Description
The data come from the RNA Mapping Database (RMDB), library RFMREP. Chemical mapping of a 177-nucleotide RNA with DMS and 2A3.
[RMDB]
RNA sequence: GGGAACGACUCGAGUAGAGUCGAAAAGUCUUACAACACGAUGAUGUUACCCCAUAAUGACCUGAGAGGUAUGAGGCGAUACCCGUAUUGAUUGUUGAGCGAAGCCGGCUUGCCGGUGGAGUGAUGCGAUUAGCAGAAGGUUCGCCUUCUGCUAAUCAAAAGAAACAACAACAACAAC
Reactivity to DMS in 0.01 (KOAc 150mM, MgCl2 10mM, bicine 150mM(pH8.5), 24C), signal-to-noise 4, nucleotides 027 to 126: g010u010c010u000u000a090c090a070a060c060a050c030g000a080u000g020a110u000g000u000u010a150c070c010c030c040a080u000a090a070u000g000a060c060c010u010g010a100g000a090g010g020u000a060u000g000a020g000g000c010g020a090u000a070c010c000c020g010u000a130u000u010g010a100u000u000g000u000u010g010a260g000c030g000a260a180g000c010c000g000g020c020u010u000g020c010c000g030g000u000g000g000a300g010u010g000a090u000g010c230
Reactivity to 2A3 in 0.01 (KOAc 150mM, MgCl2 10mM, bicine 150mM(pH8.5), 24C), signal-to-noise 1, nucleotides 027 to 126: g020u000c020u020u160a070c090a140a030c000a030c150g210a120u150g000a070u090g070u140u080a110c000c040c050c000a050u130a150a050u270g050a070c020c040u070g070a040g000a020g070g000u000a030u070g000a030g000g030c050g050a020u090a100c000c000c030g000u130a070u050u190g090a150u060u090g010u090u060g000a030g000c010g000a040a000g040c010c030g080g000c050u140u030g070c010c010g010g010u010g040g000a010g000u090g010a000u070g020c080
For 2A3 the reverse transcriptase was SuperScript II with manganese. DMS adducts were read by reverse transcription with MarathonRT. Values cover nucleotides 27 to 126. Conditions: 150 mM KOAc, 10 mM MgCl2 and 150 mM bicine (pH 8.5), 24 C. The DMS profile rests on 2,790 reads.